The record gives the reactivity of an RNA of 177 nucleotides to DMS and 2A3.

[RMDB]
RNA sequence: GGGAACGACUCGAGUAGAGUCGAAAAGAAUGUGGAGCCGUCUCGACCUCGUCCUUACCUUUUUUGGCGGCUUUAUACAUAUUUCGAUAUGUAUGCUGGACGACAACGAGGCCAGCUUACAAUUAGAGGGUUGGCUUUACUUCGGUGAAGCCAACCCAAAAGAAACAACAACAACAAC
Reactivity to DMS in 0.01 (KOAc 150mM, MgCl2 10mM, bicine 150mM(pH8.5), 24C), signal-to-noise 1, nucleotides 027 to 126: g000a120a020u010g000u030g000g010a040g000c020c200g030u000c000u020c060g000a040c120c090u000c000g050u040c110c030u000u060a090c050c000u020u040u040u000u000u000g000g000c040g020g000c130u010u020u000a000u040a010c000a010u000a060u000u000u010c080g000a030u000a050u010g000u000a000u000g000c020u000g000g000a070c020g000a190c070a080a090c050g000a020g000g020c060c020a040g000c040u000u000a000c030a080a220u020u040a070g000a210
Reactivity to 2A3 in 0.01 (KOAc 150mM, MgCl2 10mM, bicine 150mM(pH8.5), 24C), signal-to-noise 1, nucleotides 027 to 126: g130a010a020u140g010u090g080g000a000g010c000c000g020u010c040u140c280g140a110c000c000u040c020g000u060c000c080u180u120a130c000c000u090u190u070u000u110u300g030g000c010g000g000c000u000u000u000a030u000a000c010a000u040a000u000u000u070c030g030a010u010a040u090g000u000a000u000g000c010u000g000g000a020c100g010a030c000a040a040c030g010a000g000g000c060c000a000g000c000u000u000a070c030a000a040u050u020a020g020a030
For 2A3 the reverse transcriptase was SuperScript II with manganese.